[RMDB]
RNA sequence: GGGAACGACUCGAGUAGAGUCGAAAAGAGAAGUGUCCGGUUCGAUCCCUGCGUGGGUUAUCCACGGCGGAAGCGGCUUGAGUAAUCAGCCUUCGACCGCCAGCUAACAAGCAGGCUUAAACCCGGAGAACAACCGAUACUUCGGUAUCGGUUGUUCAAAAGAAACAACAACAACAAC
Reactivity to DMS in 0.01 (KOAc 150mM, MgCl2 10mM, bicine 150mM(pH8.5), 24C), signal-to-noise 3, nucleotides 027 to 126: g030a090g000a210a140g020u040g030u000c000c040g030g000u020u000c240g000a170u020c280c000c000u010g000c000g030u020g010g030g000u000u000a000u030c040c070a160c130g000g000c000g000g000a050a140g000c300g000g000c000u000u010g010a050g000u030a260a190u000c010a030g000c020c000u020u040c000g000a300c000c000g000c000c010a020g030c070u030a040a020c110a070a200g000c000a040g000g000c250u000u000a070a120a150c100c000c000g000g000a070
Reactivity to 2A3 in 0.01 (KOAc 150mM, MgCl2 10mM, bicine 150mM(pH8.5), 24C), signal-to-noise 4, nucleotides 027 to 126: g150a000g010a090a060g050u070g050u070c020c010g000g020u040u050c060g050a080u050c020c010c000u020g000c030g040u110g100g130g000u030u070a030u030c020c050a080c080g010g000c020g000g000a010a000g000c040g000g030c050u170u250g010a010g010u190a080a230u030c010a010g030c000c000u080u150c020g030a030c000c010g000c000c000a000g000c010u010a030a010c020a060a050g010c000a000g000g020c000u060u150a040a030a040c030c010c000g000g000a030
This 177-nucleotide RNA was probed chemically with DMS and 2A3. For 2A3, 2,367 sequencing reads were counted. Conditions: 150 mM KOAc, 10 mM MgCl2 and 150 mM bicine (pH 8.5), 24 C. 2A3 is a SHAPE reagent: it acylates the 2'-hydroxyl of flexible nucleotides of all four kinds.